[RMDB]
Conditions: 150 mM KOAc, 10 mM MgCl2 and 150 mM bicine (pH 8.5), 24 C. This 177-nucleotide RNA was probed chemically with 2A3 and DMS. For 2A3 the reverse transcriptase was SuperScript II with manganese. It was measured as part of the RMDB library OK1LIB.
RNA sequence: GGGAACGACUCGAGUAGAGUCGAAAAGGUUUUUAUCGCACGGUUCCCCCAGUGUGAGAAGGCUCCGGUGGAUUGCUCUAUUGGUUUGGGCUGUGUAAUGGUUGCGCGCUGAGGGUAUAACCAUUGGCUAAAUAUUAUUAUUCGUAAUAAUAUUUAGAAAAGAAACAACAACAACAAC
Reactivity to 2A3 in 0.01 (KOAc 150mM, MgCl2 10mM, bicine 150mM(pH8.5), 24C), signal-to-noise 2, nucleotides 027 to 126: g080g010u080u040u050u120u140a120u110c020g000c040a040c040g050g000u040u030c000c000c000c000c000a020g000u020g000u020g000a030g030a040a040g050g000c030u020c030c040g000g020u020g010g050a060u010u090g020c010u000c010u040a120u040u120g080g070u060u100u060g020g000g010c040u030g000u020g000u100a050a140u080g070g000u060u050g030c030g000c000g000c080u030g060a040g040g040g000u040a040u070a120a010c000c010a030u040u040g070g010
Reactivity to DMS in 0.01 (KOAc 150mM, MgCl2 10mM, bicine 150mM(pH8.5), 24C), signal-to-noise 2, nucleotides 027 to 126: g000g000u010u010u030u040u020a060u030c020g000c040a020c040g000g020u020u010c010c020c020c000c040a300g000u000g010u000g010a040g000a090a100g000g020c030u000c040c030g000g020u000g000g000a040u020u020g010c030u000c010u010a060u010u010g010g020u010u010u000g020g000g000c030u000g010u020g000u020a030a060u010g000g000u010u010g010c030g020c080g000c100u000g000a110g000g000g000u010a060u030a070a050c010c020a120u010u010g020g000